[RMDB]
RNA sequence: GGGAACGACUCGAGUAGAGUCGAAAACGGUCUUCCCAGCGACGAGGGCGACUGGGACGAUUCCAUCGCCACCGUUGUUCGUCUCACGGCCGGCGGACCCGGUACUCAGACAACUGUGACGGGCGCAUGCCUACUCAGCAUUCGUGCUGAGUAGGCAAAAAGAAACAACAACAACAAC
Reactivity to DMS in 0.01 (KOAc 150mM, MgCl2 10mM, bicine 150mM(pH8.5), 24C), signal-to-noise 3, nucleotides 027 to 126: c040g030g000u010c030u000u010c000c000c000a240g000c030g000a020c020g010a100g000g010g010c060g010a010c250u000g010g010g020a120c210g000a160u010u000c010c020a090u010c000g000c010c020a030c030c020g000u010u000g010u010u010c090g020u000c080u000c080a130c190g000g030c010c030g000g010c060g040g000a170c020c020c000g010g000u000a060c030u020c040a060g000a100c300a090a160c070u000g010u000g000a150c010g000g010g010c050g010c120a100
Reactivity to 2A3 in 0.01 (KOAc 150mM, MgCl2 10mM, bicine 150mM(pH8.5), 24C), signal-to-noise 2, nucleotides 027 to 126: c010g000g040u020c020u000u000c050c000c000a000g000c000g010a000c000g010a070g010g040g020c120g020a090c230u110g030g060g130a070c150g110a170u300u000c010c000a000u000c000g010c020c010a030c000c000g000u040u030g030u060u050c060g060u050c070u060c050a060c030g000g000c000c000g040g000c010g000g040a160c000c010c010g010g050u090a160c020u020c010a000g040a120c040a120a280c080u030g020u030g030a060c000g010g010g000c000g020c010a020